[RMDB]
RNA sequence: GGGAACGACUCGAGUAGAGUCGAAAACGAUCUUGGAGGUCAUCUCAGCGAAUCCAUCCAGCAAACGGAAUGAUGGACUUUGGUGCUGGGGAGCAAUCUUUAUGCCUUGUGAUGUAUGAAUGGUUUCAUGAUUUCAGUACAUAGCAACCUUUCAAACUGAGGGUGUAGUAUUCGUACUACACCCUCAAAAAGAAACAACAACAACAAC
Reactivity to DMS in 0.01 (KOAc 150mM, MgCl2 10mM, bicine 150mM(pH8.5), 24C), signal-to-noise 1, nucleotides 027 to 156: c070g000a050u000c020u020u000g020g020a050g080g000u010c120a190u000c000u000c040a100g050c020g000a150a190u000c010c000a050u000c050c080a200g030c060a110a130a160c110g030g000a090a150u010g020a040u000g020g000a020c050u010u000u000g020g030u000g070c010u010g050g000g050g030a090g010c050a060a090u020c040u000u000u000a100u040g020c010c060u000u000g020u000g000a070u020g030u010a000u000g010a050a060u000g000g010u000u020u010c060a120u010g000a150u000u000u000c060a140g010u000a050c020a040u000a080g020c080a020a050c020c020u030u010u000c030a040a020a070c200
Reactivity to 2A3 in 0.01 (KOAc 150mM, MgCl2 10mM, bicine 150mM(pH8.5), 24C), signal-to-noise 2, nucleotides 027 to 156: c020g030a070u020c040u080u160g040g010a000g000g010u030c040a060u010c000u000c010a000g030c030g020a030a060u000c000c000a030u030c060c090a010g050c110a130a100a160c090g040g080a090a100u210g030a030u060g000g000a000c030u100u180u140g130g010u140g000c020u000g000g000g000g000a000g010c000a090a120u020c040u030u130u120a050u140g000c000c000u030u010g070u100g050a080u040g020u070a080u080g030a050a020u000g020g040u030u060u060c040a040u070g050a130u020u090u000c000a020g050u040a030c030a020u070a050g030c000a020a030c000c000u000u010u090c040a300a030a040c030
Structure probing data (DMS and 2A3) for a 207-nucleotide construct. For 2A3 the reverse transcriptase was SuperScript II with manganese. For DMS, 2,408 sequencing reads were counted. Reactivities are given for positions 27 through 156. For DMS the reverse transcriptase was MarathonRT.